[RMDB]
RNA sequence: GGGAACGACUCGAGUAGAGUCGAAAAACGCUAGGAAUGGUUGUAUACCUCUUAGUGUCAUCCCACUGUGUGCUUCAAAUAAACUUCGCGUUGUAAUUCCUGACUUCACCGUCUGGAAUCAGGUAGUAUGGCCAGUACUUCGGUACUGGCAAAAGAAACAACAACAACAAC
Reactivity to 2A3 in 0.01 (KOAc 150mM, MgCl2 10mM, bicine 150mM(pH8.5), 24C), signal-to-noise 4, nucleotides 027 to 129: a000c000g000c000u000a000g020g030a170a150u300g000g040u130u100g170u220a080u120a070c000c000u020c010u040u000a000g020u000g020u010c010a060u020c000c070c010a020c090u110g030u030g010u080g110c030u030u080c040a030a070a100u150a060a070a010c030u070u000c030g040c080g100u030u010g050u040a020a000u000u010c000c010u010g020a020c030u090u060c130a070c030c040g140u150c040u020g000g020a000a000u070c000a010g050g040u050a010g000u050a130u110g100
Reactivity to DMS in 0.01 (KOAc 150mM, MgCl2 10mM, bicine 150mM(pH8.5), 24C), signal-to-noise 4, nucleotides 027 to 129: a020c020g020c020u020a020g010g010a000a000u080g020g040u040u080g040u070a170u090a200c000c030u030c030u010u010a040g040u050g010u010c020a000u020c000c050c000a120c140u020g010u040g040u030g040c020u000u110c090a000a010a050u090a090a080a080c050u010u040c060g010c130g040u040u050g090u070a060a060u000u000c040c060u050g020a050c030u000u090c280a100c210c220g050u010c020u000g010g000a020a020u010c100a070g070g050u020a030g030u000a050u080g000
An RNA of 170 nucleotides, treated with 2A3 and DMS and read out base by base. DMS adducts were read by reverse transcription with MarathonRT.